This 177-nucleotide RNA was probed chemically with 2A3 and DMS. As a SHAPE reagent, 2A3 marks flexible, mostly unpaired nucleotides at the ribose 2'-OH. 2A3 adducts were read by reverse transcription with SuperScript II with manganese. The reactions ran in a buffer of 150 mM KOAc, 10 mM MgCl2 and 150 mM bicine (pH 8.5), at 24 C. The DMS profile rests on 5,651 reads. Values cover nucleotides 27 to 126. It was measured as part of the RMDB library OK2TRN. For 2A3, 2,285 sequencing reads were counted.

[RMDB]
RNA sequence: GGGAACGACUCGAGUAGAGUCGAAAAAGCUGAGCUUCAUAGGUUCGAAGGUCUUGCAGAGAUUUCUGGUGACUGAGCAUCGCCAUGUCGACGGCCCGUUGCAGGGUUUCGUCCAGGACGUUGAGUCCUGAUACAGGCUCUUCGGAGCCUGUAUCAGAAAAGAAACAACAACAACAAC
Reactivity to 2A3 in 0.01 (KOAc 150mM, MgCl2 10mM, bicine 150mM(pH8.5), 24C), signal-to-noise 2, nucleotides 027 to 126: a000g030c050u040g030a000g040c010u090u030c050a110u090a210g130g000u100u110c100g000a050a020g030g070u010c010u060u130g050c070a030g040a050g020a300u080u300u050c070u100g030g000u050g020a030c020u020g040a010g010c000a020u030c020g050c030c020a070u080g120u090c070g000a030c020g040g000c000c010c020g090u110u160g050c090a070g040g020g000u080u250u300c020g000u000c010c000a010g010g010a010c020g030u060u090g040a030g010u010c000
Reactivity to DMS in 0.01 (KOAc 150mM, MgCl2 10mM, bicine 150mM(pH8.5), 24C), signal-to-noise 4, nucleotides 027 to 126: a080g010c040u010g000a070g000c040u000u000c080a120u010a110g000g010u010u010c070g000a110a080g010g000u000c030u000u000g010c050a070g000a130g000a100u000u000u000c080u010g010g020u000g010a060c070u010g010a110g000c090a130u010c020g000c030c020a040u000g010u000c120g010a040c040g010g010c000c000c010g000u000u010g010c190a160g020g000g000u000u000u010c020g010u000c030c070a040g000g010a010c020g000u020u000g010a220g000u000c020